Chemical mapping of a 207-nucleotide RNA with 2A3 and DMS.
[RMDB]
RNA sequence: GGGAACGACUCGAGUAGAGUCGAAAAACCAUUGAUAGCAAAGCUAAUCAAGCUCUACCUUCAGUUUGACUGGUUUCAGGAAAUGGUUCUGUAUUCCAAGAUCUGCGAAACCUAUCUACAAUGUUGCACUGAGUUUAACAGAUCAGGUAUUAAGGUACCUAAUGACUCCAUUCGUGGAGUCAUUAGGAAAAGAAACAACAACAACAAC
Reactivity to 2A3 in 0.01 (KOAc 150mM, MgCl2 10mM, bicine 150mM(pH8.5), 24C), signal-to-noise 4, nucleotides 027 to 156: a000c010c000a050u020u080g050a070u060a040g040c110a160a100a030g010c020u090a170a090u070c020a040a020g020c040u030c020u070a080c020c010u060u050c040a070g050u040u070u070g030a010c030u020g040g010u010u030u050c030a030g020g070a040a060a080u050g020g020u070u090c060u130g180u160a110u120u000c000c010a020a030g030a100u000c010u050g020c080g040a020a000a010c000c010u020a040u040c000u000a020c100a150a190u190g030u070u090g090c080a050c060u030g030a030g140u030u120u140a080a040c040a000g040a020u020c020a020g070g000u050a090u090u100a070a010g010g000u010a020
Reactivity to DMS in 0.01 (KOAc 150mM, MgCl2 10mM, bicine 150mM(pH8.5), 24C), signal-to-noise 3, nucleotides 027 to 156: a050c000c010a040u010u000g030a150u010a070g030c090a090a140a030g020c000u000a030a030u000c090a070a040g020c000u000c030u000a110c150c090u000u000c030a030g040u000u000u000g000a040c010u020g020g020u000u010u000c040a230g000g030a120a050a070u000g000g010u000u000c040u000g030u000a190u010u000c040c020a110a150g000a060u000c000u000g040c050g000a080a060a040c010c010u000a090u010c010u000a040c030a020a160u010g020u000u000g000c020a060c300u010g010a060g020u000u000u000a120a070c020a060g020a020u000c010a080g000g020u000a090u010u000a080a070g020g010u000a130

Annotation: Conditions: 150 mM KOAc, 10 mM MgCl2 and 150 mM bicine (pH 8.5), 24 C. 2A3 adducts were read by reverse transcription with SuperScript II with manganese. DMS adducts were read by reverse transcription with MarathonRT.